[RMDB]
RNA sequence: GGGAACGACUCGAGUAGAGUCGAAAAGAAAGCGACGAUUCGAUCGUAGUCGCAAUGAUCGGGUAAAGACGCGAAAAGGUGCCAUGGUGACGGCACCGUCACCAUAAAACGCGGAACACCAAAGAAACCCUUAUGUAUUCUUCGGAAUACAUAAGGGAAAAGAAACAACAACAACAAC
Reactivity to DMS in 0.01 (KOAc 150mM, MgCl2 10mM, bicine 150mM(pH8.5), 24C), signal-to-noise 5, nucleotides 027 to 126: g010a090a070a160g000c030g020a020c040g010a090u030u020c050g010a050u010c060g020u030a170g020u000c050g000c040a100a100u010g010a070u000c060g000g000g000u010a300a050a030g000a020c000g020c020g000a070a060a210a070g000g010u010g000c060c060a080u000g000g000u000g000a020c030g010g020c230a040c140c000g010u000c030a050c030c020a010u010a050a050a080a100c100g000c060g000g000a100a100c040a030c000c010a040a050a090g010a130a090a150
Reactivity to 2A3 in 0.01 (KOAc 150mM, MgCl2 10mM, bicine 150mM(pH8.5), 24C), signal-to-noise 5, nucleotides 027 to 126: g100a010a090a010g040c010g010a010c010g030a070u130u130c040g100a060u100c040g040u040a060g030u010c010g010c010a000a010u050g000a020u070c050g030g000g010u050a060a070a020g040a010c000g000c020g080a000a060a020a080g120g050u070g050c080c030a030u070g030g000u020g010a040c030g030g190c080a020c050c010g000u010c000a000c000c000a010u060a060a110a010a000c010g010c020g000g010a050a030c050a000c010c000a050a080a020g060a060a090a060